[RMDB]
RNA sequence: GGGAACGACUCGAGUAGAGUCGAAAAUACAAUAGCGUAGGGAACCAAGCUAAGAGGUUGCAAGUCCAACGGUAGAGGGCUUGGUUCGCAGCUGCUCUAGAAGAGGUCCCACUCCCUACGCCGCAAAGUUACAUAUUGUGUUCGCACAAUAUGUAACAAAAGAAACAACAACAACAAC
Reactivity to DMS in 0.01 (KOAc 150mM, MgCl2 10mM, bicine 150mM(pH8.5), 24C), signal-to-noise 8, nucleotides 027 to 126: u010a090c220a110a090u010a100g020c010g010u010a000g000g010g010a040a060c060c050a060a070g010c010u000a070a120g010a110g010g010u010u000g010c040a040a080g010u010c080c010a050a070c120g000g020u010a080g000a160g010g010g000c030u000u000g000g000u010u000c120g000c130a040g010c040u000g000c060u010c040u000a070g010a090a110g010a100g010g010u000c010c010c010a170c120u000c010c000c000u000a020c010g020c000c150g010c190a050a060a080
Reactivity to 2A3 in 0.01 (KOAc 150mM, MgCl2 10mM, bicine 150mM(pH8.5), 24C), signal-to-noise 8, nucleotides 027 to 126: u200a010c080a030a140u070a140g000c000g010u010a000g010g010g000a010a020c030c020a070a010g010c010u060a080a050g040a020g090g070u100u090g100c030a040a020g030u020c030c010a090a030c080g160g070u170a090g050a140g120g030g000c010u010u010g020g040u060u040c030g000c000a010g000c010u060g010c010u020c010u040a130g040a250a020g030a130g020g010u030c000c000c000a010c020u000c000c000c000u000a000c010g010c020c000g040c060a110a150a010
Chemical mapping of a 177-nucleotide RNA with DMS and 2A3. For DMS, 10,885 sequencing reads were counted. The reactions ran in a buffer of 150 mM KOAc, 10 mM MgCl2 and 150 mM bicine (pH 8.5), at 24 C. Values cover nucleotides 27 to 126.